RNA sequence: GGGAACGACUCGAGUAGAGUCGAAAAAGCACGGUUUUUGAGGACGCAUUUUGUCCGUGCGGUAAUGCCCUCCCUUACACUUUCUCGCAUGGUGCGGGAGUGUGGAGAGGAAACAAAAGCUAGUCUCGAUAGGCGGUUAACUUCGGUUAACCGCCAACUAUACACCAGAGUUCGCUCUGGUGUAUAGAAAAGAAACAACAACAACAAC
Reactivity to DMS in 0.01 (KOAc 150mM, MgCl2 10mM, bicine 150mM(pH8.5), 24C), signal-to-noise 2, nucleotides 027 to 156: a070g000c000a030c010g010g020u000u010u010u000u000g000a090g000g000a030c020g000c080a150u000u000u000u000g030u000c010c000g000u000g020c000g020g000u000a040a040u000g000c030c010c020u000c010c000c090u000u020a060c010a010c000u010u010u000c010u000c010g050c010a300u010g010g020u010g030c000g050g000g010a010g030u010g060u000g030g010a010g000a060g000g010a080a030a060c010a010a040a050a070g020c040u000a100g000u000c020u010c090g030a180u000a130g010g000c010g020g010u000u010a010a020c000u000u000c300g020g000u000u000a020a010c000c000g000c000c000a000a010
Reactivity to 2A3 in 0.01 (KOAc 150mM, MgCl2 10mM, bicine 150mM(pH8.5), 24C), signal-to-noise 3, nucleotides 027 to 156: a000g000c000a010c000g010g010u010u010u000u000u010g090a120g030g020a020c030g040c090a130u000u000u000u000g010u010c000c000g000u000g000c010g040g030u160a060a030u210g030c030c000c000u050c020c000c000u030u080a010c000a000c000u090u120u060c010u010c020g040c020a070u260g230g020u270g140c010g000g000g000a000g000u000g000u010g000g000a030g020a020g040g000a020a020a010c010a000a000a000a010g070c040u100a030g000u000c000u000c020g050a110u120a140g010g000c000g000g000u000u010a010a000c000u060u050c230g030g000u010u000a000a000c020c000g000c000c010a000a000